[RMDB]
RNA sequence: GGGAACGACUCGAGUAGAGUCGAAAAUAAAGGGAGAUGGCGACGUGGUGGUAGUUCUUGUUCGGAAUCGCUCGAAGGUUGGGGGCUGCAGCGAAGCCGGUCCCUUUGCUGUCGUAGCGGUACGGCGGCCCAGUGACUGCUUCGGCAGUCACUGGGCAAAAGAAACAACAACAACAAC
Reactivity to 2A3 in 0.01 (KOAc 150mM, MgCl2 10mM, bicine 150mM(pH8.5), 24C), signal-to-noise 1, nucleotides 027 to 126: u160a010a000a000g000g020g000a030g130a200u080g000g000c020g000a030c000g000u100g000g200u060g050g030u140a070g020u090u030c000u000u120g180u060u060c040g060g040a060a140u170c080g000c050u010c020g100a090a060g040g120u190u160g020g000g010g030g000c000u010g010c020a020g070c020g110a050a010g020c000c060g000g000u000c000c000c000u000u000u030g030c010u060g000u050c000g040u070a000g100c050g000g090u030a000c000g010g000c020g000